[RMDB]
RNA sequence: GGGAACGACUCGAGUAGAGUCGAAAAAGCAGGAGUACGCUCCUGCAUGGGUAGACGAAUUGACCCCAACUGAAGUUCAAUUCUAACGUUAAAAGGAGUUUUAUAUGACUGGACGUACGCCUCCAGAUGACGAUUUCAUUCUUCGGAAUGAAAUCAACGUAUAUGAGUGGUUCGCCACUCAUAUACGAAAAGAAACAACAACAACAAC
Reactivity to 2A3 in 0.01 (KOAc 150mM, MgCl2 10mM, bicine 150mM(pH8.5), 24C), signal-to-noise 5, nucleotides 027 to 156: a000g000c010a000g010g030a010g000u060a030c150g040c090u000c000c000u000g010c010a000u020g000g000g020u160a130g030a200c050g000a030a010u000u020g010a010c010c010c000c000a060a060c180u300g030a010a000g030u070u010c000a010a000u010u000c030u080a150a050c130g070u090u180a040a050a030a040g130g030a110g020u050u070u150u060a220u060a090u140g130a060c020u000g000g000a010c040g030u240a040c110g060c030c030u000c010c000a010g010a050u110g070a050c090g000a000u000u000u000c000a000u000u000c000u000u030c130g090g000a000a000u000g000a000a000a000u010c000a000a000
Reactivity to DMS in 0.01 (KOAc 150mM, MgCl2 10mM, bicine 150mM(pH8.5), 24C), signal-to-noise 2, nucleotides 027 to 156: a060g000c000a010g000g010a030g030u000a080c300g050c010u000c020c010u000g020c030a020u010g000g000g030u000a090g010a130c100g000a060a080u000u000g010a060c030c010c010c030a090a260c170u000g000a090a100g020u020u000c040a000a030u000u000c040u010a110a130c150g000u000u000a080a060a100a130g000g000a110g030u000u010u010u000a120u000a080u020g000a140c000u010g000g020a050c040g000u000a080c120g000c070c020u000c000c000a100g010a080u000g020a100c100g000a070u000u000u010c000a000u000u000c000u010u010c300g050g010a040a020u000g000a000a000a020u000c010a040a100
Source: RMDB library M2RFPK, as collected in RNAgym.
This 207-nucleotide RNA was probed chemically with 2A3 and DMS.
The DMS profile rests on 3,318 reads.
As a SHAPE reagent, 2A3 marks flexible, mostly unpaired nucleotides at the ribose 2'-OH.
Conditions: 150 mM KOAc, 10 mM MgCl2 and 150 mM bicine (pH 8.5), 24 C.